[RMDB]
RNA sequence: GGGAACGACUCGAGUAGAGUCGAAAAGAUAUGGAUCCGGCCAGACAUGCCUAUGUAGUGUCGGAAACGACAUGAAAGGCAACAGCUGGAUCGGAUCCUAAGUCAAAGUUGGCCUUCGGGCCAACAAGUAAUUCACUUUGUUCGCAAAGUGAAUUACAAAAGAAACAACAACAACAAC
Reactivity to DMS in 0.01 (KOAc 150mM, MgCl2 10mM, bicine 150mM(pH8.5), 24C), signal-to-noise 4, nucleotides 027 to 126: g000a050u000a300u010g010g000a020u000c000c010g030g000c010c000a010g010a080c100a240u000g010c010c000u000a100u010g020u000a160g000u000g020u000c000g010g020a070a060a200c010g000a010c000a010u000g000a130a130a070g010g010c010a020a090c300a240g000c010u000g000g000a040u010c010g030g000a010u000c000c000u000a000a120g000u000c040a130a120a140g010u000u000g010g000c000c000u000u020c220g030g000g000c000c000a000a000c000a050a120
Reactivity to 2A3 in 0.01 (KOAc 150mM, MgCl2 10mM, bicine 150mM(pH8.5), 24C), signal-to-noise 2, nucleotides 027 to 126: g020a020u100a050u150g000g000a000u000c000c000g020g000c020c010a020g030a140c060a150u100g000c000c000u090a120u220g040u050a010g020u020g000u000c000g010g000a040a090a000c000g020a010c000a000u030g040a110a010a010g030g000c020a030a030c030a030g060c000u030g000g100a240u070c010g000g000a000u000c000c000u010a060a010g040u000c020a000a080a160g000u010u000g000g000c010c010u030u080c300g040g000g000c000c020a000a000c000a000a000